[RMDB]
RNA sequence: GGGAACGACUCGAGUAGAGUCGAAAAACUUUACAGCUAUUGCUAAAGAAAAAACAACAACACCUGAGAAAAAAGUGACCUAUAAAUUUGAUUCAGGCGCGACAAAUGUACCGACUGAUGUCGUAAAAGCGGCUUCAAGUUUGAAUGAGGGUGGCAAGGUGCAGCUCCGGUUCGCCGGAGCUGCACCAAAAGAAACAACAACAACAAC
Reactivity to 2A3 in 0.01 (KOAc 150mM, MgCl2 10mM, bicine 150mM(pH8.5), 24C), signal-to-noise 2, nucleotides 027 to 064: a000c000u000u000u000a000c000a000g010c010u030a020u080u120g010c010u060a000a000a000g000a000a000a000a000a000a000c000a000a000c000a000a000c000a000c000c000u000

Overview:
Source: RMDB library OK3TST, as collected in RNAgym. Structure probing data (2A3) for a 207-nucleotide construct. The 2A3 profile rests on 39,158 reads.